[RMDB]
This 177-nucleotide RNA was probed chemically with 2A3 and DMS.
RNA sequence: GGGAACGACUCGAGUAGAGUCGAAAAAUAAACCGGAAGCGACGCAGCAAGCCCGACCGGAAGGGCAACCGGAACCCGGAUCUCAACCCGGUUGGCACGCACCUGAGAGACGGGAAUGCGUAAAAAACACUACAUUCAGGUUCGCCUGAAUGUAGUGAAAAGAAACAACAACAACAAC
Reactivity to 2A3 in 0.01 (KOAc 150mM, MgCl2 10mM, bicine 150mM(pH8.5), 24C), signal-to-noise 1, nucleotides 027 to 126: a040u130a030a070a000c000c010g000g000a140a030g200c080g060a030c080g010c060a050g010c020a030a090g020c020c000c000g010a040c000c010g050g040a030a050g050g020g000c010a010a020c000c010g010g040a040a040c020c010c030g000g080a090u010c020u020c060a090a100c030c040c000g040g000u020u050g060g000c050a030c050g000c020a040c000c040u040g020a060g000a000g000a080c030g040g030g000a010a080u080g000c010g000u010a020a130a020a000a050a000
Reactivity to DMS in 0.01 (KOAc 150mM, MgCl2 10mM, bicine 150mM(pH8.5), 24C), signal-to-noise 2, nucleotides 027 to 126: a100u020a040a070a060c010c000g010g000a170a190g020c190g010a020c070g010c060a060g050c100a130a170g020c020c010c000g030a100c030c050g000g000a080a060g020g000g020c010a080a090c020c010g050g000a150a180c020c000c000g000g000a100u000c000u010c020a060a120c120c060c010g010g040u000u000g020g020c070a010c090g010c040a080c060c050u010g010a130g000a080g020a120c050g000g010g030a120a040u000g020c030g000u000a000a010a040a040a030a140

Conditions: 150 mM KOAc, 10 mM MgCl2 and 150 mM bicine (pH 8.5), 24 C. It was measured as part of the RMDB library M2PK90.